[RMDB]
RNA sequence: GGGAACGACUCGAGUAGAGUCGAAAAGGAACUAUGUUCGAAGACGAAGCCUCCACGUCGUCGUUUCGACGUCCGUAGACGGGAGAGCAUAGUUAAGAUCUGGAGGAGGCACGGAUCAAAAUAAAAACGUUCAUGAAGUGUUCGCACUUCAUGGACGAAAAGAAACAACAACAACAAC
Reactivity to DMS in 0.01 (KOAc 150mM, MgCl2 10mM, bicine 150mM(pH8.5), 24C), signal-to-noise 7, nucleotides 027 to 126: g020g010a000a020c000u000a010u010g010u000u000c000g020a180a130g010a020c000g020a060a180g010c000c000u000c000c000a090c010g000u000c000g000u000c010g000u000u000u010c020g000a070c080g020u010c040c270g000u040a060g010a010c000g000g000g010a230g000a010g000c000a000u000a000g010u000u000a080a080g020a010u010c020u000g000g000a190g050g000a020g000g010c000a130c020g000g000a010u010c010a140a060a090a070u030a040a080a050a090a150
Reactivity to 2A3 in 0.01 (KOAc 150mM, MgCl2 10mM, bicine 150mM(pH8.5), 24C), signal-to-noise 6, nucleotides 027 to 126: g140g010a010a010c000u000a000u010g000u000u000c000g070a080a020g070a020c020g030a060a010g010c000c000u010c000c000a000c000g000u000c000g000u000c010g010u010u020u050c060g020a030c040g070u030c030c020g050u030a030g020a040c020g000g000g020a020g000a000g000c000a000u000a000g000u020u040a070a010g000a000u000c000u000g010g010a050g000g000a000g000g000c000a000c010g000g000a000u010c010a010a010a000a000u120a000a030a010a000a000
Structure probing data (DMS and 2A3) for a 177-nucleotide construct. In probing experiments dimethyl sulfate is read out at A N1 and C N3, which are open when not base-paired. For 2A3 the reverse transcriptase was SuperScript II with manganese.